[RMDB]
RNA sequence: GGGAACGACUCGAGUAGAGUCGAAAAAUGCCAUUCGCCCAUGGCAGCAUGUGUUGGAGCCUUUGUCGGGUUAUUUGCUGUUGGCACAGAAGUUAUAUACUGACGGUGCUGAAUAUGCCGAAGGUUACGCAGGAAAAUGGUUCGCCAUUUUCCUGCGAAAAGAAACAACAACAACAAC
Reactivity to DMS in 0.01 (KOAc 150mM, MgCl2 10mM, bicine 150mM(pH8.5), 24C), signal-to-noise 1, nucleotides 027 to 126: a060u000g000c030c000a060u030u020c200g020c060c040c020a190u010g000g010c020a110g020c170a090u000g010u010g010u000u000g000g010a060g000c010c030u000u000u020g020u010c180g040g000g000u000u000a040u010u020u010g010c030u010g000u030u000g000g030c020a010c040a010g000a180a030g010u000u010a080u010a150u000a030c000u000g000a290c300g000g010u000g000c080u000g000a070a080u020a040u000g030c030c060g000a040a090g000g020u000u000a110